[RMDB]
RNA sequence: GGGAACGACUCGAGUAGAGUCGAAAACGCUCGCUCAUCGACGGUGGCCUCGAGCGACGUAUUCGGGACCAAUGCGUAGACCAGCGUGCAGUCGAGCGCCUCUGCCGCACGCCGCAACGUACUGAGCCACCCUAUCAUUAUUCGUAAUGAUAGGGUGAAAAGAAACAACAACAACAAC
Reactivity to 2A3 in 0.01 (KOAc 150mM, MgCl2 10mM, bicine 150mM(pH8.5), 24C), signal-to-noise 9, nucleotides 027 to 126: c040g010c040u020c010g010c010u020c010a100u120c070g080a070c030g050g060u050g040g020c010c020u040c040g020a030g020c040g040a040c040g030u070a120u050u100c040g020g020g040a030c020c010a050a090u140g020c040g030u050a030g050a110c020c020a010g010c010g030u050g010c030a020g040u070c030g020a030g030c040g040c020c020u030c020u050g020c020c010g010c000a030c030g020c010c000g010c020a040a070c040g050u080a060c060u060g020a020g010c010
Reactivity to DMS in 0.01 (KOAc 150mM, MgCl2 10mM, bicine 150mM(pH8.5), 24C), signal-to-noise 8, nucleotides 027 to 126: c090g000c080u000c020g010c030u010c050a060u020c110g010a070c040g000g020u010g000g010c020c010u010c060g000a070g010c050g010a060c080g010u010a070u020u000c060g000g010g000a080c050c040a080a080u030g000c020g020u010a060g010a090c090c090a120g000c020g020u000g010c030a080g000u010c090g000a090g020c100g010c030c020u010c040u010g000c030c020g010c040a050c040g010c010c020g010c080a090a090c070g000u000a070c080u000g000a120g000c120
Source: RMDB library OK1LIB, as collected in RNAgym.
Structure probing data (2A3 and DMS) for a 177-nucleotide construct.
For 2A3 the reverse transcriptase was SuperScript II with manganese.
DMS adducts were read by reverse transcription with MarathonRT.
Values cover nucleotides 27 to 126.